The data come from the RNA Mapping Database (RMDB), library TTRDES. Structure probing data (DMS) for a 177-nucleotide construct.
RNA sequence: GGGAACGACUCGAGUAGAGUCGAAAAAAGAUAUGGAGUAGUGGAGGUGUUGUUGUGGUUGAUGACCAGCGAUCGGAAACGAUCGCUGCAAGACCACAGCCACCGAUGAAACUACUCCUAAGUCAAACAAAUUAGUUCCGUUCGCGGAACUAAUUUGAAAAGAAACAACAACAACAAC
Reactivity to DMS in 0.01 (KOAc 150mM, MgCl2 10mM, bicine 150mM(pH8.5), 24C), signal-to-noise 1, nucleotides 027 to 126: a110a140g010a010u030a300u000g000g000a060g010u000a000g000u010g000g040a070g030g010u000g000u000u010g010u000u040g020u000g030g040u000u010g000a120u000g010a120c300c000a000g060c010g010a020u000c000g020g010a080a180a180c010g000a000u010c010g030c000u010g000c000a010a090g000a010c000c000a000c010a000g000c000c000a020c020c010g000a080u010g010a120a070a010c000u000a020c000u000c000c000u010a070a080g010u020c050a120a060a110
For DMS the reverse transcriptase was MarathonRT.